[RMDB]
RNA sequence: GGGAACGACUCGAGUAGAGUCGAAAAAUGAAUAGAAUCAUGGUAAAUACAUAUUGGUGGCGUUUCUUACAACUAAACAAGUCGUAAGGGAACCAGACCAUGUAUAUAUACCUGACAUUCUAAUAAGGAUUAUACUGGACUUCGGUCCAGUAUAAUCAAAAGAAACAACAACAACAAC
Reactivity to 2A3 in 0.01 (KOAc 150mM, MgCl2 10mM, bicine 150mM(pH8.5), 24C), signal-to-noise 1, nucleotides 027 to 126: a000u090g020a070a050u010a020g010a030a020u030c020a030u100g000g000u010a040a060a000u010a010c010a000u110a080u210u150g020g000u000g070g070c170g040u010u020u000c010u000u000a000c020a010a000c030u110a300a170a040c090a090a000g000u000c010g010u010a040a010g110g040g000a020a000c010c000a000g030a010c010c000a000u000g010u010a020u010a000u000a010u000a010c000c000u000g010a000c030a040u020u000c000u020a070a080u090a080a080g020
Reactivity to DMS in 0.01 (KOAc 150mM, MgCl2 10mM, bicine 150mM(pH8.5), 24C), signal-to-noise 2, nucleotides 027 to 126: a070u020g000a150a110u000a000g010a010a000u010c040a080u000g020g030u000a020a070a020u010a010c010a050u000a100u000u010g010g030u000g010g010c200g010u000u000u000c010u000u000a000c000a020a000c020u030a060a080a130c300a060a020g010u000c050g000u010a000a020g000g010g000a000a010c010c010a300g000a090c010c020a000u000g000u000a010u000a050u000a100u000a020c010c000u000g000a250c290a020u000u010c000u000a030a040u020a130a090g000